This 177-nucleotide RNA was probed chemically with DMS and 2A3. The RNA was probed in 150 mM KOAc, 10 mM MgCl2 and 150 mM bicine (pH 8.5) at 24 C.

RNA sequence: GGGAACGACUCGAGUAGAGUCGAAAAUAGAUACUAUAGACAAUCUAAAAUGGGGUGGAAUAAAGGGAUUUAGCGACGAUGCUGUUUCGUUCGAUUGGAUCCAUAAAUCGAAGAGUACAGACGACAACCACUAAAUCAGUUUCGACUGAUUUAGUGGAAAAGAAACAACAACAACAAC
Reactivity to DMS in 0.01 (KOAc 150mM, MgCl2 10mM, bicine 150mM(pH8.5), 24C), signal-to-noise 4, nucleotides 027 to 126: u010a060g000a040u000a050c070u010a300u000a120g010a100c100a090a050u020c010u000a020a080a080a120u000g000g000g020g020u000g000g010a100a100u000a040a080a090g010g000g000a050u000u000u000a070g010c050g000a100c070g000a060u020g000c050u010g010u010u000u000c020g000u000u000c030g020a060u010u000g020g000a090u000c130c110a080u010a030a040a020u000c030g000a030a030g010a060g010u010a040c030a040g020a060c050g010a090c160a040a160
Reactivity to 2A3 in 0.01 (KOAc 150mM, MgCl2 10mM, bicine 150mM(pH8.5), 24C), signal-to-noise 3, nucleotides 027 to 126: u030a010g040a000u090a070c060u070a070u040a270g030a090c030a080a070u010c020u140a060a050a080a170u090g030g010g000g030u070g020g110a080a040u130a180a110a080g030g000g020a000u050u020u120a010g040c010g060a030c010g010a020u060g020c050u040g060u030u050u020c130g060u030u050c000g010a020u020u040g030g030a020u060c070c030a060u170a040a050a000u030c030g000a020a010g000a020g040u010a020c020a010g040a040c030g000a010c030a000a050
It was measured as part of the RMDB library OK2TST. Reactivities are rounded to 0.1 and cut off at 0 and 3. For 2A3, 2,318 sequencing reads were counted. The DMS profile rests on 3,062 reads.